[RMDB]
RNA sequence: GGGAACGACUCGAGUAGAGUCGAAAAGUGUAGACUUUGGUACUUAUUUUUUACCCGUCAGGUUAAAUAAAGAUAAUUAUUUACCAGAAGCGAUACAACGCGGUACCGGAGAUGGGUGGGUUAUUCACGACCAUCGUUAAUUCGUUAACGAUGGUCGAAAAGAAACAACAACAACAAC
Reactivity to DMS in 0.01 (KOAc 150mM, MgCl2 10mM, bicine 150mM(pH8.5), 24C), signal-to-noise 1, nucleotides 027 to 126: g010u010g000u000a200g010a120c010u000u000u020g010g030u010a000c010u030u010a030u000u010u010u000u050u020a090c070c030c060g030u000c010a230g020g010u000u030a000a020a020u010a010a030a220g000a150u000a080a130u010u000a000u000u000u000a030c030c000a030g000a060a100g010c050g000a130u000a020c140a070a030c250g010c120g000g000u010a000c010c000g010g010a090g030a120u000g000g000g020u030g000g000g010u000u000a040u000u010c140a140

Chemical mapping of a 177-nucleotide RNA with DMS. Source: RMDB library OK2TST, as collected in RNAgym. DMS adducts were read by reverse transcription with MarathonRT. The reactions ran in a buffer of 150 mM KOAc, 10 mM MgCl2 and 150 mM bicine (pH 8.5), at 24 C.